[RMDB]
RNA sequence: GGGAACGACUCGAGUAGAGUCGAAAAUUCCAUCCGAAACGUACGUGAGCGGAUAAUGGAGCAUGCGAAAGGAUGGAGCAAGCUGUCAAGUACGGAUGGGAAAGCAUGCGGAUGUGUGCCGAGUUCGCGGCAUGCGAAAGGAUGGACCUAGCGCACAAUGAGAUACGAUUUUCGAAUCGUAUCUCAUAAAAGAAACAACAACAACAAC
Reactivity to 2A3 in 0.01 (KOAc 150mM, MgCl2 10mM, bicine 150mM(pH8.5), 24C), signal-to-noise 5, nucleotides 027 to 156: u040u020c000c000a010u000c010c010g080a110a080a080c040g020u090a020c030g070u050g100a040g040c040g010g020a070u100a140a090u170g080g010a040g000c050a030u040g000c030g110a060a040a040g070g000a020u060g020g000a020g020c030a020a070g020c030u040g080u150c070a080a050g050u030a040c030g010g050a030u080g040g000g030a040a030a000g010c010a010u050g030c030g050g050a110u130g050u020g010u030g010c000c020g040a050g060u100u050c080g010c020g110g010c020a030u070g010c020g080a130a040a020g060g000a040u030g000g010a000c010c020u020a030g050c050g010c070a010c020a100
Reactivity to DMS in 0.01 (KOAc 150mM, MgCl2 10mM, bicine 150mM(pH8.5), 24C), signal-to-noise 2, nucleotides 027 to 156: u020u000c020c010a050u000c020c000g000a070a090a160c060g020u000a010c030g040u000g020a150g020c020g000g010a080u010a040a110u020g000g000a170g010c040a100u010g000c040g000a120a100a170g020g020a070u000g010g000a120g020c040a080a100g010c010u030g040u000c030a060a070g000u010a100c040g010g000a100u020g020g010g010a040a080a070g000c000a070u010g020c040g030g000a120u000g010u000g020u000g020c000c020g010a240g020u010u010c040g000c010g010g020c030a030u000g000c000g010a070a090a100g000g000a110u010g010g000a090c050c010u000a110g060c060g040c030a080c020a150